An RNA of 177 nucleotides, treated with 2A3 and DMS and read out base by base.
DMS adducts were read by reverse transcription with MarathonRT.
2A3 adducts were read by reverse transcription with SuperScript II with manganese.
The RNA was probed in 150 mM KOAc, 10 mM MgCl2 and 150 mM bicine (pH 8.5) at 24 C.
RNA sequence: GGGAACGACUCGAGUAGAGUCGAAAACGAGAAGAGACUAGGCUUUGGUUUCUUCAAGUGAAGCGGUCACCAAUCAGGUGUGGUAGUUACCGUAAAAAAUCCGGAUUGAUUCGAGGCCCCGAGCGCUGUUAAGCGCGUCCUUCGGGACGCGCUUAACAAAAGAAACAACAACAACAAC
Reactivity to 2A3 in 0.01 (KOAc 150mM, MgCl2 10mM, bicine 150mM(pH8.5), 24C), signal-to-noise 2, nucleotides 027 to 126: c000g020a000g000a020a000g000a010g000a020c030u050a010g170g270c100u170u210u110g020g000u000u050u010c000u000u000c000a050a000g060u070g000a030a000g010c000g000g020u020c020a010c040c020a060a060u020c070a050g000g170u130g080u160g160g030u070a070g050u030u160a010c000c000g010u070a040a030a030a030a030a030u030c000c000g040g000a010u010u070g050a090u060u050c010g020a020g060g000c000c000c000c000g020a030g010c010g000c050u050
Reactivity to DMS in 0.01 (KOAc 150mM, MgCl2 10mM, bicine 150mM(pH8.5), 24C), signal-to-noise 1, nucleotides 027 to 126: c060g000a300g000a000a000g030a000g000a000c010u030a120g010g040c200u000u010u040g000g040u000u010u000c000u000u000c000a020a300g000u000g000a220a090g000c040g030g070u000c010a040c090c000a010a050u050c090a060g000g000u000g000u040g000g050u060a040g060u010u020a020c000c010g010u000a000a030a070a090a050a090u000c070c000g000g060a130u040u000g000a140u050u000c000g050a070g000g000c000c010c000c080g010a110g030c030g020c210u000